[RMDB]
RNA sequence: GGGAACGACUCGAGUAGAGUCGAAAACACUGCAUUAGCCCAUAUUAAUCCAAAUUCGUUAGAGAAUAACUUGGUUAAAUUGGGCAUCUUUAAACGUGCUAUCGAGAUUGGCAAUACGCAAUUGAUAUCAGAGCAAAAAGUUCGCUUUUUGCUCUGAAAAAGAAACAACAACAACAAC
Reactivity to 2A3 in 0.01 (KOAc 150mM, MgCl2 10mM, bicine 150mM(pH8.5), 24C), signal-to-noise 5, nucleotides 027 to 126: c070a010c030u070g060c010a190u120u260a060g020c000c000c000a030u120a100u060u020a000a030u020c020c000a040a020a030u080u090c030g110u180u260a080g040a020g090a240a040u050a060a070c050u010u030g000g000u010u010a010a010a050u020u010g000g000g000c000a010u010c000u000u160u140a070a050a000c070g040u020g000c040u040a070u130c060g050a010g070a170u040u100g090g000c010a060a050u130a150c080g030c050a030a090u030u060g020a000u030a020
Reactivity to DMS in 0.01 (KOAc 150mM, MgCl2 10mM, bicine 150mM(pH8.5), 24C), signal-to-noise 3, nucleotides 027 to 126: c020a110c120u020g010c060a040u000u000a160g030c000c000c000a000u000a260u000u020a030a040u000c000c000a030a070a060u050u030c030g030u060u020a090g000a190g010a030a030u040a120a020c110u000u000g000g010u000u000a020a000a300u000u000g000g020g050c000a070u040c040u020u000u040a050a070a110c090g000u010g000c000u010a060u010c080g000a120g060a060u050u000g000g020c010a110a020u030a110c190g000c060a010a070u030u030g000a090u010a070